RNA sequence: GGGAACGACUCGAGUAGAGUCGAAAAGGAAUGUGCUUCGGCACAUUCCAAAAGAAAGGCAGACGGGGAACGCCAAACGCUGACGAACCAAAAUCGAAGGUAAAACCCACCGGUUCGCCGGUGGGAACUCCAAUACAGGAUUCGUCCUGUAUUGGAGAAAAGAAACAACAACAACAAC
Reactivity to 2A3 in 0.01 (KOAc 150mM, MgCl2 10mM, bicine 150mM(pH8.5), 24C), signal-to-noise 3, nucleotides 027 to 126: g010g000a000a000u030g000u010g000c030u060u100c210g010g020c000a000c000a000u000u020c000c010a000a000a000a000g010a020a050a010g030g040c030a020g020a080c090g020g000g000g070a090a060c030g020c040c000a100a050a010c090g000c030u040g050a030c030g030a050a070c020c040a080a050a030a130u100c070g040a070a030g060g010u090a020a030a090a140c000c000c000a000c000c010g020g070u030u040c260g010c100c010g000g000u020g000g000g010a010a000
Reactivity to DMS in 0.01 (KOAc 150mM, MgCl2 10mM, bicine 150mM(pH8.5), 24C), signal-to-noise 3, nucleotides 027 to 126: g020g000a020a000u000g030u000g000c000u010u000c170g030g010c010a000c000a010u000u010c010c010a020a040a080a110g020a120a080a090g010g010c030a050g010a120c050g000g000g020g010a090a110c070g000c050c020a070a070a060c110g010c040u000g010a180c060g020a070a120c060c060a040a050a130a050u010c070g000a060a140g000g000u000a070a060a080a110c000c000c000a000c020c000g000g000u000u000c170g020c000c000g010g000u000g000g000g010a000a010
The record gives the reactivity of an RNA of 177 nucleotides to 2A3 and DMS. The reactions ran in a buffer of 150 mM KOAc, 10 mM MgCl2 and 150 mM bicine (pH 8.5), at 24 C. Source: RMDB library M2PK50, as collected in RNAgym. For 2A3, 4,221 sequencing reads were counted. For DMS, 2,629 sequencing reads were counted.